[RMDB]
An RNA of 207 nucleotides, treated with 2A3 and DMS and read out base by base.
For DMS the reverse transcriptase was MarathonRT.
RNA sequence: GGGAACGACUCGAGUAGAGUCGAAAAACGCAUCAUACGUGAUGCGAGAACUACAGUUCCUCUCCUCUAGCACACAGAGGUCAAUUGGGUGCGACCCCCCCCUCUCCCGUGGGUCAACGGGAACCAAAAAAGACCCUUUAGUUCGCUAAAGGGUCAAUCUUACUCACUAGUUCGCUAGUGAGUAAGAAAAAGAAACAACAACAACAAC
Reactivity to 2A3 in 0.01 (KOAc 150mM, MgCl2 10mM, bicine 150mM(pH8.5), 24C), signal-to-noise 2, nucleotides 027 to 156: a000c000g010c000a000u010c010a010u050a110c290g120u040g010a000u000g000c050g000a020g050a020a030c100u200a090c070a050g030u000u000c000c000u020c020u020c030c000u040c030u050a040g000c000a020c000a000c000a010g020a010g000g030u030c020a040a050u110u070g030g020g000u010g040c020g170a260c000c000c000c000c020c010c010c000u040c010u000c000c000c000g010u000g000g000g010u070c030a000a010c000g000g000g000a010a000c010c000a010a040a050a010a000a030g000a000c000c000c010u010u000u000a000g020u000u050c130g010c130u000a000a000a020g000g000g000u000c000a010a000
Reactivity to DMS in 0.01 (KOAc 150mM, MgCl2 10mM, bicine 150mM(pH8.5), 24C), signal-to-noise 2, nucleotides 027 to 156: a110c020g000c000a020u000c000a080u000a070c290g030u000g020a040u000g000c000g000a080g000a110a150c060u000a070c120a150g030u000u020c040c010u010c030u010c020c000u000c050u000a140g000c120a090c120a120c140a070g010a030g010g000u010c130a060a150u000u000g000g100g030u000g000c060g000a300c010c000c000c000c020c030c000c020u000c050u000c000c000c020g000u000g000g020g000u010c140a060a070c000g000g030g040a030a060c080c050a010a030a060a060a120a130g010a010c010c000c000u010u000u000a030g020u010u010c300g010c010u000a030a020a010g020g030g040u000c010a000a040

The reactions ran in a buffer of 150 mM KOAc, 10 mM MgCl2 and 150 mM bicine (pH 8.5), at 24 C. Values cover nucleotides 27 to 156. For 2A3, 2,351 sequencing reads were counted. It was measured as part of the RMDB library M2RFPK.